[RMDB]
RNA sequence: GGGAACGACUCGAGUAGAGUCGAAAAUGCUGACUCAGCGGCUGCCAGCAUGGUACCGUGUAAAAUGACUCGCCGCUGUGGAUAGGACAAGAUGGCGUGGAAAUAAUCGGUCGACUGCGCUCCGGGCGAUCAGUGCUGGUUUCGACCAGCACUGAUCAAAAGAAACAACAACAACAAC
Reactivity to 2A3 in 0.01 (KOAc 150mM, MgCl2 10mM, bicine 150mM(pH8.5), 24C), signal-to-noise 4, nucleotides 027 to 126: u050g020c000u050g010a030c020u010c060a010g040c040g020g000c040u040g010c000c040a000g040c010a060u100g020g120u120a090c010c060g010u100g000u100a050a090a070a120u100g020a020c000u000c050g020c000c000g000c020u020g060u010g020g050a120u060a170g050g020a040c090a140a060g040a150u130g040g040c040g040u050g010g040a010a020a130u160a020a050u140c040g050g020u000c020g040a060c030u030g000c010g010c060u020c030c000g030g010g050c040
Reactivity to DMS in 0.01 (KOAc 150mM, MgCl2 10mM, bicine 150mM(pH8.5), 24C), signal-to-noise 1, nucleotides 027 to 126: u000g020c050u000g020a050c020u020c070a040g000c090g030g000c000u000g020c000c040a080g010c030a030u050g020g060u010a130c020c080g000u000g000u000a080a040a050a050u000g000a130c030u000c150g000c010c020g020c000u000g010u030g000g020a160u000a150g000g000a030c130a090a050g000a050u000g010g000c000g100u020g000g000a060a110a040u000a060a070u020c030g010g090u040c030g000a070c020u000g000c030g020c010u000c010c000g000g000g000c040